Chemical mapping of a 177-nucleotide RNA with 2A3. Conditions: 150 mM KOAc, 10 mM MgCl2 and 150 mM bicine (pH 8.5), 24 C. Source: RMDB library OK1LIB, as collected in RNAgym.

RNA sequence: GGGAACGACUCGAGUAGAGUCGAAAAGGUCCAUUGCAUUUUUACUUAAUGAGUGAGCCCCAUAGAGUGCCUGCAUCUUAUCCUAUUUCUGAUUCAGAUAUGGGUUCUAUUGUGAGAUCUUGGUUGAGGACUAGUGUCUCUUCGGAGACACUAGUCCAAAAGAAACAACAACAACAAC
Reactivity to 2A3 in 0.01 (KOAc 150mM, MgCl2 10mM, bicine 150mM(pH8.5), 24C), signal-to-noise 1, nucleotides 027 to 126: g240g030u010c030c000a060u000u190g030c000a030u000u130u060u000u130a200c190u190u190a110a000u130g060a000g000u000g000a110g000c000c000c000c000a080u240a050g000a000g000u000g030c000c000u060g050c090a120u010c000u090u040a000u300c000c030u050a190u060u230u030c060u160g090a300u230u060c000a000g000a160u000a060u060g110g000g000u050u000c000u000a200u060u300g000u000g020a050g000a090u030c020u160u170g160g000u030u080g130a020